[RMDB]
Chemical mapping of a 207-nucleotide RNA with DMS and 2A3.
The RNA was probed in 150 mM KOAc, 10 mM MgCl2 and 150 mM bicine (pH 8.5) at 24 C.
RNA sequence: GGGAACGACUCGAGUAGAGUCGAAAAUAGACUGUACCCACCCCCUUCCUCAUUUAGGGUCCCUCUCCAUUCAUUCCGUCUAAAUCUUACCCAAAUUGCGAAAUCAACCUUACAUUCCAGAUCCAUGCCUUCUGUUUCUGAUUUCCAGAACACAAAAGGAUAAUAAUGCAUUCGUGCAUUAUUAUCCAAAAGAAACAACAACAACAAC
Reactivity to DMS in 0.01 (KOAc 150mM, MgCl2 10mM, bicine 150mM(pH8.5), 24C), signal-to-noise 2, nucleotides 027 to 156: u000a110g010a110c080u010g000u010a090c030c000c020a230c030c040c010c030c020u000u000c030c010u010c100a170u010u000u010a070g030g000g010u000c010c010c000u020c010u000c060c020a120u000u010c070a070u010u000c030c000g040u000c050u000a000a050a000u000c060u000u020a200c080c020c030a040a060a050u000u000g020c150g000a040a030a100u000c040a030a060c040c020u000u000a080c080a180u000u000c010c000a040g040a080u000c000c010a060u000g000c000c000u010u010c030u010g000u000u000u000c020u000g010a120u000u010u020c020c010a070g000a070a030c070a100c070a020a050a070a110
Reactivity to 2A3 in 0.01 (KOAc 150mM, MgCl2 10mM, bicine 150mM(pH8.5), 24C), signal-to-noise 3, nucleotides 027 to 156: u030a000g110a040c080u070g020u150a090c010c010c010a070c010c000c000c000c000u000u020c040c000u060c040a100u060u060u140a080g020g030g010u030c000c000c000u010c010u040c040c020a040u070u070c000a010u020u040c010c020g050u030c030u010a000a040a040u000c010u020u050a070c000c000c020a020a060a070u040u080g010c030g030a020a050a040u080c020a020a060c020c010u030u070a030c010a090u080u010c000c000a000g020a050u000c010c000a020u040g020c010c000u090u120c050u070g040u020u070u000c010u010g050a090u000u040u070c040c020a020g030a090a020c090a000c090a060a090a040a010